[RMDB]
RNA sequence: GGGAACGACUCGAGUAGAGUCGAAAAACGGUCUGGCGCAGGCGUUCGUCAUUGGCGCCAACCACAUCGGCGCCGAUUCGGUGGCAUUGGUGUUGGGGGACAACAUCUUCUACGGCCCAGGUCUGGGUCAGGUCCUCUUAUUCGUAAGAGGACCUGAAAAAGAAACAACAACAACAAC
Reactivity to DMS in 0.01 (KOAc 150mM, MgCl2 10mM, bicine 150mM(pH8.5), 24C), signal-to-noise 3, nucleotides 027 to 126: a100c040g000g020u010c060u020g030g000c020g010c070a070g020g010c050g000u010u070c080g000u010c110a130u020u030g000g000c000g000c000c000a060a040c120c120a100c130a110u030c090g030g010c020g020c020c000g010a070u010u030c060g000g010u000g000g010c070a080u000u020g000g020u010g030u010u010g030g000g010g000g010a110c070a060a070c120a060u010c030u000u020c050u010a070c130g000g000c020c000c000a040g010g000u030c100u030g000g010g000
Reactivity to 2A3 in 0.01 (KOAc 150mM, MgCl2 10mM, bicine 150mM(pH8.5), 24C), signal-to-noise 5, nucleotides 027 to 126: a010c030g010g030u000c050u050g040g000c020g030c060a030g030g010c010g080u160u120c040g050u120c050a100u010u110g060g000c000g000c000c000a020a030c020c020a030c020a060u150c070g000g000c000g010c040c010g040a090u140u120c070g050g010u040g040g010c100a090u020u140g030g000u040g030u030u050g010g030g020g060g080a010c000a020a010c000a080u020c000u100u030c040u080a070c070g030g010c000c010c000a020g050g040u100c130u080g050g000g030